Source: RMDB library OK1LIB, as collected in RNAgym. This 177-nucleotide RNA was probed chemically with DMS and 2A3. For 2A3 the reverse transcriptase was SuperScript II with manganese. The DMS profile rests on 1,682 reads. For 2A3, 650 sequencing reads were counted.
RNA sequence: GGGAACGACUCGAGUAGAGUCGAAAAAUCAUUCUCGCUGGGUGCUGUGCUGUCUACUGAAGACGUGAAGCAGUUCGAGAAGUCUCUCUGUGAGCUGAGCCGUAAGGUCCUGAACGGUGAGAAAGUCUGGUUUUAGGGAGUUCGCUCCCUAAAACCAAAAAGAAACAACAACAACAAC
Reactivity to DMS in 0.01 (KOAc 150mM, MgCl2 10mM, bicine 150mM(pH8.5), 24C), signal-to-noise 2, nucleotides 027 to 126: a070u030c120a120u010u000c010u010c000g070c270u000g080g000g070u010g000c020u030g030u100g000c010u060g030u000c000u000a100c300u010g010a090a000g060a020c000g000u000g030a030a120g010c020a000g010u000u000c090g000a100g050a130a140g000u000c000u020c010u060c040u010g000u000g010a080g000c030u000g000a240g000c020c000g000u010a080a100g020g000u000c000c010u030g020a040a090c020g020g000u020g000a060g000a060a170a060g000u000c110
Reactivity to 2A3 in 0.01 (KOAc 150mM, MgCl2 10mM, bicine 150mM(pH8.5), 24C), signal-to-noise 2, nucleotides 027 to 126: a000u080c030a100u020u000c000u000c000g040c070u150g070g100g000u080g000c050u030g040u130g080c060u090g030u030c010u000a230c120u280g160a130a050g020a040c070g070u060g060a090a090g040c000a100g030u010u020c110g010a050g020a170a060g040u010c000u000c000u000c000u060g100u030g190a040g020c000u000g050a030g000c030c000g000u000a040a040g020g000u010c000c000u020g000a010a020c080g000g050u040g010a060g100a080a120a000g010u010c080